About this RNA
Chemical mapping of a 207-nucleotide RNA with 2A3. Values cover nucleotides 27 to 156. Source: RMDB library M2RFPK, as collected in RNAgym.
RNA sequence: GGGAACGACUCGAGUAGAGUCGAAAAUGGCGGGGGCGAAACAGGAUCGACAAGGGUGUAAAGAUCGCUCUUUUACUCGGCAUGAUACCACCGUUAUCGGGUCAACAGAGUAGUUGCAAAUUACAACAAAAGAAUCGCGCGUUCGCGCGCGAUUCAAGAUACGCACACUGUUCGCAGUGUGCGUAUCAAAAGAAACAACAACAACAAC
Reactivity to 2A3 in 0.01 (KOAc 150mM, MgCl2 10mM, bicine 150mM(pH8.5), 24C), signal-to-noise 1, nucleotides 027 to 156: u080g030g000c030g000g000g010g000g020c000g040a000a010a010c050a000g070g040a080u120c010g030a010c050a150a010g050g110g040u010g030u140a050a100a010g040a040u120c040g000c000u040c000u010u040u000u050a060c080u090c000g000g000c020a020u030g000a000u010a100c010c010a060c030c040g050u030u020a050u140c010g020g000g020u030c000a010a000c060a110g080a030g040u060a000g030u010u060g010c050a000a050a060u120u060a140c050a150a000c010a030a180a000a070g020a020a000u000c000g000c000g000c020g020u040u050c300g030c010g050c000g000c000g090a000u000u000c000a040a000